RNA sequence: GGGAACGACUCGAGUAGAGUCGAAAAGAGAUUGCUGGGUAUAAUUAUGUUUAUCAAGACAAUAACCCAUACACAGGAGGUAGGAGAGAGGUUAACUAUUAUGACUUAUCUACGGAGUGGAAAAAGUUCUCCUUUACUUUUACUUUACAAUCAUAUAUAACACGUUUAGAUUCGUCUAAACGUGUUAAAAAGAAACAACAACAACAAC
Reactivity to DMS in 0.01 (KOAc 150mM, MgCl2 10mM, bicine 150mM(pH8.5), 24C), signal-to-noise 3, nucleotides 027 to 156: g010a220g000a090u010u010g020c040u020g000g020g060u010a050u010a090a160u000u010a080u000g000u000u010u000a120u010c120a100a140g020a070c040a070a080u000a070a130c020c010c020a090u000a120c090a070c090a110g010g010a070g000g000u010a020g030g000a070g010a140g000a030g000g000u000u010a010a060c030u000a140u000u000a120u030g000a100c040u000u000a100u000c070u010a120c180g010g010a070g040u000g010g020a050a070a080a080a090g000u000u000c040u000c020c030u000u010u000a070c040u000u000u000u000a030c030u000u010u000a060c050a070a090u000c020a050u000a070u000a200
Reactivity to 2A3 in 0.01 (KOAc 150mM, MgCl2 10mM, bicine 150mM(pH8.5), 24C), signal-to-noise 4, nucleotides 027 to 156: g060a000g000a020u070u100g030c040u040g000g050g020u050a120u050a220a150u250u110a130u090g050u030u050u030a300u160c080a090a010g050a070c040a050a040u050a040a010c020c020c000a020u110a010c080a000c020a010g120g000a010g030g000u040a010g030g020a010g000a000g000a000g010g010u010u030a010a030c010u020a070u290u060a040u170g050a010c000u070u080a030u120c030u050a030c130g110g000a050g010u050g020g070a020a010a020a020a010g020u040u000c010u010c000c000u020u050u060a170c010u020u030u070u030a020c000u040u080u050a040c040a050a050u120c010a030u210a140u290a000